RNA sequence: GGGAACGACUCGAGUAGAGUCGAAAACGGGUCCGGUCACCUUGAUCAGCACUUCGUCGGCAGCUGUUUUACCGCUGGUGGUUACGAUAUAGCCGAAAUCGAGUGCCGACUCGCCGCUGCCAACAUAGCGAUAAUGACGGUUCGCCGUCAUUAUCGCAAAAGAAACAACAACAACAAC
Reactivity to 2A3 in 0.01 (KOAc 150mM, MgCl2 10mM, bicine 150mM(pH8.5), 24C), signal-to-noise 1, nucleotides 027 to 126: c020g040g000g000u090c120c070g060g000u150c050a000c050c050u050u080g010a070u090c000a040g030c000a000c080u090u010c010g030u000c000g020g000c010a010g000c010u060g070u020u120u170u300a040c030c010g000c030u070g070g300u040g030g090u210u080a000c000g000a040u040a030u100a150g030c000c010g050a070a080a000u070c060g000a010g010u000g000c020c000g030a020c000u000c020g080c020c040g060c000u080g000c000c010a010a020c020a050u170a070